[RMDB]
RNA sequence: GGGAACGACUCGAGUAGAGUCGAAAACCUAUCCAAAAUGAGAUCCCAUCUUGCACACUGUGCUAAUUUGAGAUUCUCAUGCCACCUACUUGGAGAGAUCUGGACUAGAAGUCAGGGCAUCUGACUCAAUACAUUCGUCAGUUCGCUGACGAAUGAACGUAUAGUCGACCUUCGGGUCGACUAUACGAAAAGAAACAACAACAACAAC
Reactivity to 2A3 in 0.01 (KOAc 150mM, MgCl2 10mM, bicine 150mM(pH8.5), 24C), signal-to-noise 3, nucleotides 027 to 156: c000c000u010a040u080c030c030a110a060a010a030u020g000a000g010a020u010c010c000c000a000u010c030u030u040g030c000a010c020a110c220u300g020u010g040c060u170a040a090u010u030u060g070a050g000a040u250u130c000u010c000a010u010g040c010c020a070c010c020u100a090c060u090u080g020g010a020g010a000g000a080u040c060u160g040g030a050c030u040a060g030a060a000g070u000c010a000g040g050g120c080a060u100c100u010g000a010c000u000c030a040a050u090a100c000a010u000u000c000g000u000c000a000g010u010u120c220g000c080u000g000a020c000g000a000a000u010g000a020a020
Reactivity to DMS in 0.01 (KOAc 150mM, MgCl2 10mM, bicine 150mM(pH8.5), 24C), signal-to-noise 1, nucleotides 027 to 156: c020c000u050a110u000c080c020a040a140a140a050u000g010a040g000a080u000c000c010c010a030u000c120u010u000g000c010a120c020a180c210u020g020u000g000c050u000a020a070u000u000u020g000a050g000a020u000u000c050u000c000a070u010g010c060c030a200c090c020u000a110c050u020u010g000g020a140g000a160g000a060u000c020u020g020g000a140c080u010a060g010a080a110g010u000c020a000g010g050g070c150a050u000c020u020g010a080c010u010c050a080a080u000a100c020a040u000u000c000g010u000c010a000g000u000u000c300g020c020u020g000a000c020g000a010a000u000g010a030a160